Conditions: 150 mM KOAc, 10 mM MgCl2 and 150 mM bicine (pH 8.5), 24 C. An RNA of 177 nucleotides, treated with DMS and 2A3 and read out base by base. For 2A3, 1,644 sequencing reads were counted. For DMS, 3,067 sequencing reads were counted.
RNA sequence: GGGAACGACUCGAGUAGAGUCGAAAAGAAGAGAGUCGACGCAAGCGACGAUAACUGCGGAACGGUAACCGUAGUACCGUAUGGUCAUGGCACGCGAAAGCGAAAGACCGAACCAUGCCAUAAGAGAACUAAUGCGCUCAUUCGUGAGCGCAUUAGUAAAAGAAACAACAACAACAAC
Reactivity to DMS in 0.01 (KOAc 150mM, MgCl2 10mM, bicine 150mM(pH8.5), 24C), signal-to-noise 3, nucleotides 027 to 126: g000a060a080g010a070g000a240g040u000c040g020a090c060g000c130a080a060g000c030g010a010c020g000a190u010a100a100c070u050g000c010g020g020a130a090c090g000g020u020a030a080c010c000g000u030a080g000u000a040c040c040g020u000a000u020g000g010u020c000a000u000g000g000c150a150c040g000c010g000a060a070a130g000c010g030a050a070a040g000a090c060c100g010a100a210c000c010a000u000g000c000c000a000u040a060a130g020a120g010a120
Reactivity to 2A3 in 0.01 (KOAc 150mM, MgCl2 10mM, bicine 150mM(pH8.5), 24C), signal-to-noise 2, nucleotides 027 to 126: g120a000a030g070a010g050a030g000u020c020g030a040c000g040c140a090a050g030c020g030a010c070g000a040u060a050a020c040u030g040c020g000g060a070a070c080g070g000u110a130a060c000c000g030u090a000g040u020a010c000c020g030u040a010u020g000g010u250c020a030u120g000g020c080a010c020g000c010g070a110a000a000g010c070g030a020a000a060g120a050c060c080g010a020a000c000c000a000u010g000c030c000a010u080a040a100g070a000g040a040